[RMDB]
RNA sequence: GGGAACGACUCGAGUAGAGUCGAAAACUGGCUUGUUGGGAUUCAACUAUAAUGUUUGGAUUGCCUGUACGACGACACCUUUGGGAGAGAAGUAUCAUGAGAUGAUACAAGAAGAAAUGAAGGCUGAGUCUCAGAGCUUAAAAUCAGUAACAGAAGAGAUAUGAUACAGGUUCGCCUGUAUCAUAUCAAAAGAAACAACAACAACAAC
Reactivity to 2A3 in 0.01 (KOAc 150mM, MgCl2 10mM, bicine 150mM(pH8.5), 24C), signal-to-noise 3, nucleotides 027 to 156: c020u030g070g050c040u020u040g030u040u060g090g000g070a080u120u100c060a060a010c030u070a030u100a300a130u160g070u030u130u080g070g010a040u030u080g040c000c020u040g040u110a050c060g010a000c010g040a060c010a040c030c020u090u120u110g060g030g030a070g010a010g020a170a050g000u010a000u030c020a030u100g150a040g070a280u060g000a000u030a040c040a020a040g120a050a000g030a050a070a030u140g020a080a000g030g050c080u030g060a000g030u000c010u020c040a040g000a030g010c000u060u070a080a000a010a040u060c020a010g060u090a040a050c040a040g000a000a010g040a060
Reactivity to DMS in 0.01 (KOAc 150mM, MgCl2 10mM, bicine 150mM(pH8.5), 24C), signal-to-noise 2, nucleotides 027 to 156: c010u010g020g000c070u020u020g010u010u020g020g020g030a120u000u020c010a030a080c070u010a100u010a090a050u000g000u000u000u000g000g010a130u000u000g000c060c000u000g030u000a110c060g000a090c030g020a180c180a050c040c020u000u000u010g020g020g040a200g010a160g010a150a180g000u000a020u000c020a080u000g040a260g050a300u000g010a090u010a040c010a100a090g010a140a170g000a120a090a110u000g010a090a070g050g020c020u000g000a300g020u000c000u000c060a080g010a060g040c030u000u000a040a080a040a130u000c040a090g000u000a120a090c050a110g040a120a070g010a210